[RMDB]
RNA sequence: GGGAACGACUCGAGUAGAGUCGAAAAGCGAGUGGAUGUUCCUCCCCCCGAAGGUCCCGAGUGAGGCUUAUCCCGGGGAUCGGCCUCCGCUCCUCCAUGGUGGAUCCAGGUCCCCCGAAAGGAGGGGGUCAUAGCAAUGGUUCGCCAUUGCUAUGACAAAAGAAACAACAACAACAAC
Reactivity to DMS in 0.01 (KOAc 150mM, MgCl2 10mM, bicine 150mM(pH8.5), 24C), signal-to-noise 1, nucleotides 027 to 126: g010c030g000a050g040u000g000g010a050u010g010u020u010c000c000u000c010c020c010c020c000c040g020a090a080g030g000u000c000c000c000g000a090g030u000g000a010g000g000c020u010u000a050u010c010c010c170g000g010g020g010a020u010c070g000g020c040c030u000c010c070g010c000u000c000c010u010c010c010a090u010g020g000u010g010g000a010u000c020c130a170g010g010u000c010c010c020c010c000g020a070a120a110g010g010a050g000g010g010g000
Structure probing data (DMS) for a 177-nucleotide construct.
DMS adducts were read by reverse transcription with MarathonRT.
It was measured as part of the RMDB library VIROID.
The DMS profile rests on 1,551 reads.